[RMDB]
RNA sequence: GGGAACGACUCGAGUAGAGUCGAAAAAAGAUAUGGAUGUAUCCGAAUACGUAUAGGGAGCCUAUCAAGCUCGGAAACGAGCUUGUAAGGGCGAGGAUCUAUACGGGGUAGAUACAUCCUAAGUCAACCAAUAGUUAUACUUCGGUAUAACUAUUGGAAAAGAAACAACAACAACAAC
Reactivity to 2A3 in 0.01 (KOAc 150mM, MgCl2 10mM, bicine 150mM(pH8.5), 24C), signal-to-noise 4, nucleotides 027 to 126: a000a010g020a010u020a020u060g000g000a010u000g000u010a000u020c110c000g020a110a080u120a070c000g000u000a000u000a010g010g010g000a010g010c000c000u070a090u080c010a000a000g010c010u000c000g000g000a000a010a000c010g000a000g000c000u000u010g010u020a220a300g060g000g010c010g010a120g000g000a000u000c010u000a000u000a010c000g000g010g080g010u010a010g000a000u000a000c000a000u010c000c000u000a000a000g000u000c020a030a060
Reactivity to DMS in 0.01 (KOAc 150mM, MgCl2 10mM, bicine 150mM(pH8.5), 24C), signal-to-noise 4, nucleotides 027 to 126: a120a090g000a010u000a010u020g000g000a010u000g010u000a000u000c000c020g000a110a020u010a030c000g000u000a000u000a000g000g000g000a010g020c000c000u000a190u010c000a010a010g020c010u000c010g020g000a000a000a020c000g010a010g020c000u000u000g000u010a040a210g010g010g010c010g000a040g010g010a000u010c000u000a000u000a000c000g000g000g000g000u000a030g000a010u000a000c000a010u010c000c000u000a000a070g000u000c010a150a300